Background
Structure probing data (DMS and 2A3) for a 177-nucleotide construct. Values cover nucleotides 27 to 126. Reactivities are rounded to 0.1 and cut off at 0 and 3. DMS adducts were read by reverse transcription with MarathonRT. Source: RMDB library RFMREP, as collected in RNAgym.
RNA sequence: GGGAACGACUCGAGUAGAGUCGAAAACUUUGAGCCGUCGGGGCGGCUUCAUUAAGCAGCGCUAACAAGGCGUACAAAUGCCGGGCCCAGCAGCUUUUUUGCAAUGGUGGGGCCUUAGCAGGGCGCCCCAUGAUAACAACUUCGGUUGUUAUCAUGGAAAAGAAACAACAACAACAAC
Reactivity to DMS in 0.01 (KOAc 150mM, MgCl2 10mM, bicine 150mM(pH8.5), 24C), signal-to-noise 1, nucleotides 027 to 126: c060u000u000u010g020a040g010c020c010g020u020c170g010g000g000g040c040g050g000c000u000u000c130a100u000u010a080a050g040c030a120g010c060g020c050u000a050a080c140a120a110g010g000c020g020u010a060c150a070a080a150u000g010c000c120g040g000g000c000c030c030a080g010c040a060g010c010u000u000u010u010u000u020g000c020a070a110u000g020g000u010g000g000g010g000c000c020u000u010a030g000c070a070g000g010g020c000g010c020c000
Reactivity to 2A3 in 0.01 (KOAc 150mM, MgCl2 10mM, bicine 150mM(pH8.5), 24C), signal-to-noise 1, nucleotides 027 to 126: c000u060u010u170g010a010g020c040c010g010u050c050g010g050g060g050c000g010g000c000u120u080c040a070u080u090a050a000g010c030a010g010c000g010c060u070a090a070c060a100a060g020g000c020g010u080a090c060a050a220a030u050g000c030c000g000g060g000c000c000c010a030g010c000a020g010c000u170u050u130u110u300u300g030c040a120a100u150g120g070u060g010g050g070g000c030c010u010u040a000g000c000a020g010g010g030c000g020c030c000
The reactions ran in a buffer of 150 mM KOAc, 10 mM MgCl2 and 150 mM bicine (pH 8.5), at 24 C.